[RMDB]
RNA sequence: GGGAACGACUCGAGUAGAGUCGAAAAGCCGACCGCAAGCAGACCAUCACGGUUCCAGGCACCAACCUGCUCAGGAUGGGCGACAAGCUGGUGGUGACCAAGACCGGCGCGCCGCCGUACUCGCCGCCCACCAGGAUGUAUUCGUACAUCCUGGUGGAAAAGAAACAACAACAACAAC
Reactivity to 2A3 in 0.01 (KOAc 150mM, MgCl2 10mM, bicine 150mM(pH8.5), 24C), signal-to-noise 2, nucleotides 027 to 126: g010c000c010g080a070c030c030g020c030a040a080g020c030a030g040a120c020c000a060u100c040a010c080g050g050u010u080c070c020a060g030g000c010a000c040c010a000a120c010c010u060g030c030u040c090a030g110g000a110u130g070g040g030c020g010a040c030a080a020g030c010u050g020g020u030g030g020u030g050a080c010c020a070a000g140a100c060c000g020g000c030g000c010g000c020c010g000c000c010g020u060a030c010u000c030g020c010c000g040c020
Reactivity to DMS in 0.01 (KOAc 150mM, MgCl2 10mM, bicine 150mM(pH8.5), 24C), signal-to-noise 3, nucleotides 027 to 126: g020c020c010g050a080c100c040g020c070a100a100g030c120a110g020a110c070c030a030u000c060a150c100g020g020u000u000c070c070a090g030g020c030a090c070c060a070a120c020c020u010g020c050u000c070a100g000g000a110u010g010g010g030c020g010a030c080a080a070g000c050u000g020g030u020g010g030u000g010a150c050c030a140a100g000a100c130c040g000g010c040g010c090g000c040c030g020c020c010g000u000a080c050u000c040g010c040c030g010c100
Chemical mapping of a 177-nucleotide RNA with 2A3 and DMS. The 2A3 profile rests on 2,632 reads. The DMS profile rests on 2,044 reads. For 2A3 the reverse transcriptase was SuperScript II with manganese. Source: RMDB library OK2TRN, as collected in RNAgym. Reactivities are given for positions 27 through 126.